RNA sequence: GGGAACGACUCGAGUAGAGUCGAAAACUGAUAGACCUCAACAUCAUCGUGCCCACCGCGGACGCUCUGUCCCUGCGCCGCGCCAUUGCCUUCGGCCUCGACAACCUCAUGCGCAAGGUGGAUGAGAUCCACGGAUAUCUUUCGAGAUAUCCGUGGAAAAAGAAACAACAACAACAAC
Reactivity to 2A3 in 0.01 (KOAc 150mM, MgCl2 10mM, bicine 150mM(pH8.5), 24C), signal-to-noise 1, nucleotides 027 to 126: c060u040g050a110u110a090g060a080c000c050u020c010a010a110c020a110u070c000a020u050c030g070u030g050c000c010c000a000c090c090g060c030g000g070a160c040g050c050u010c000u080g090u090c000c000c010u050g000c090g010c000c000g040c010g010c020c000a060u070u100g020c010c000u050u010c000g000g030c000c000u020c020g010a030c010a040a030c000c010u040c010a030u120g050c010g050c040a050a030g020g010u000g000g100a050u080g010a010g040a060
Reactivity to DMS in 0.01 (KOAc 150mM, MgCl2 10mM, bicine 150mM(pH8.5), 24C), signal-to-noise 2, nucleotides 027 to 126: c080u010g020a100u010a050g000a100c100c030u010c060a050a120c060a070u000c030a040u000c050g010u000g010c060c000c050a130c150c100g040c060g000g000a060c030g030c040u000c120u020g000u000c020c020c010u000g010c040g000c040c030g000c060g040c040c070a050u000u010g000c040c030u000u010c070g010g030c010c030u000c060g000a110c090a060a080c070c030u000c040a080u000g010c060g010c080a110a100g020g050u000g000g000a060u010g010a090g020a240